[RMDB]
RNA sequence: GGGAACGACUCGAGUAGAGUCGAAAACUCAUUCAUUUAUCUUACAAGCAUUUUUUGUGUCUUACAAUGUGCCAGAAACCAGGGAUAUAAAGAUAAUGAAGACAAAGUUUCUGCCCUGAACUCACAGCGUCUUAUGUAGGUUCGCCUACAUAAGACGAAAAGAAACAACAACAACAAC
Reactivity to 2A3 in 0.01 (KOAc 150mM, MgCl2 10mM, bicine 150mM(pH8.5), 24C), signal-to-noise 2, nucleotides 027 to 126: c010u030c020a030u070u020c010a030u090u140u180a050u020c000u070u090a040c020a130a080g000c000a020u030u030u070u060u100u080g060u010g100u080c120u110u040a010c020a000a100u010g010u030g050c040c040a070g080a040a030a000c060c000a040g000g000g050a030u040a010u050a190a100a000g000a010u010a010a010u010g010a020a020g020a050c120a010a090a000g010u050u040u080c070u110g040c000c000c000u020g060a060a030c050u040c060a100c000a080g080
Reactivity to DMS in 0.01 (KOAc 150mM, MgCl2 10mM, bicine 150mM(pH8.5), 24C), signal-to-noise 3, nucleotides 027 to 126: c010u010c030a130u010u000c030a030u000u000u000a000u000c010u010u000a140c230a140a140g010c030a010u000u000u010u020u000u010g030u000g000u010c130u010u010a060c050a050a020u010g010u000g020c010c070a130g020a030a150a220c100c040a040g010g000g000a050u000a100u020a050a050a040g010a020u010a020a030u000g000a050a040g000a120c200a040a060a090g010u000u000u000c120u000g000c010c000c010u000g020a080a050c080u000c140a080c200a130g020
About this RNA: Source: RMDB library OK2TST, as collected in RNAgym. This 177-nucleotide RNA was probed chemically with 2A3 and DMS. The RNA was probed in 150 mM KOAc, 10 mM MgCl2 and 150 mM bicine (pH 8.5) at 24 C. For 2A3 the reverse transcriptase was SuperScript II with manganese.